[RMDB]
RNA sequence: GGGAACGACUCGAGUAGAGUCGAAAACGAUACCGAGCUGAAAGAGUUUACCUGGUUAGACCGUUGCUUCACCUGGUGCGUGUACUCAUCCAGGGAACAUCUCGCGCGUGAGCUGGACAUUCCGAGAUUUUUCAGCGAGUGCGCGAGGAACAGAUACCUAACAACAGUGGUUCGCCACUGUUGUUAGAAAAGAAACAACAACAACAAC
Reactivity to DMS in 0.01 (KOAc 150mM, MgCl2 10mM, bicine 150mM(pH8.5), 24C), signal-to-noise 1, nucleotides 027 to 156: c000g000a300u000a080c040c030g010a090g050c020u000g030a100a160a170g000a140g000u010u000u000a100c030c000u000g010g050u000u000a030g000a090c060c030g010u000u000g060c000u000u010c080a100c060c030u010g040g000u000g030c020g000u000g020u000a080c020u000c040a140u020c030c040a030g050g010g000a090a020c130a170u000c000u010c000g000c000g020c020g050u000g000a300g010c000u020g040g010a080c180a160u010u010c100c120g020a290g000a020u000u000u000u000u000c000a030g000c030g010a300g000u000g000c000g000c000g020a030g000g010a030a080c050a090g000a040u000a070c130
Reactivity to 2A3 in 0.01 (KOAc 150mM, MgCl2 10mM, bicine 150mM(pH8.5), 24C), signal-to-noise 3, nucleotides 027 to 156: c030g010a020u140a100c010c030g050a010g080c060u100g080a070a070a040g130a030g020u030u050u100a300c020c000u030g010g050u000u040a000g010a000c010c040g100u100u260g020c040u120u190c050a120c100c070u090g060g000u020g010c050g030u150g040u190a240c000u020c120a080u060c010c000a000g000g000g000a000a000c000a020u010c010u000c000g000c030g000c000g040u060g010a010g000c010u010g010g010a020c020a080u220u000c060c080g100a110g020a210u070u080u000u000u030c000a000g000c000g010a000g000u000g000c000g000c000g010a000g000g010a030a000c010a000g030a030u080a110c040